[RMDB]
RNA sequence: GGGAACGACUCGAGUAGAGUCGAAAAUUGCAAGGUAGGACUUGAAUACAAAAUUGGGAACAUAAACAAGUCUCGAGAACGCAGAUUGCAGAGGACUUUCGAUCCCUUGAAAAUCAUGAGUUCAGAUCCCGAAGGUUCGCAGCAGCAAAGGAGGCAGCUAACGGACCUGUUUCGACAGGUCCGUUAGAAAAGAAACAACAACAACAAC
Reactivity to 2A3 in 0.01 (KOAc 150mM, MgCl2 10mM, bicine 150mM(pH8.5), 24C), signal-to-noise 1, nucleotides 027 to 156: u150u060g040c070a140a050g060g000u140a030g010g020a020c030u070u050g040a100a070u200a210c080a160a100a050a040u130u070g040g000g000a100a030c080a100u120a030a070a060c050a090a000g000u030c100u010c040g090a120g000a070a060c040g000c000a010g070a140u000u170g020c000a000g000a090g000g000a030c030u000u110u110c140g020a150u010c000c030c000u010u020g070a060a090a000a090u020c050a130u070g000a000g040u000u000c000a000g020a120u050c020c030c010g010a000a000g040g030u000u050c030g000c090a030g000c000a030g050c000a000a080a000g070g000a010g000g000c000a020g090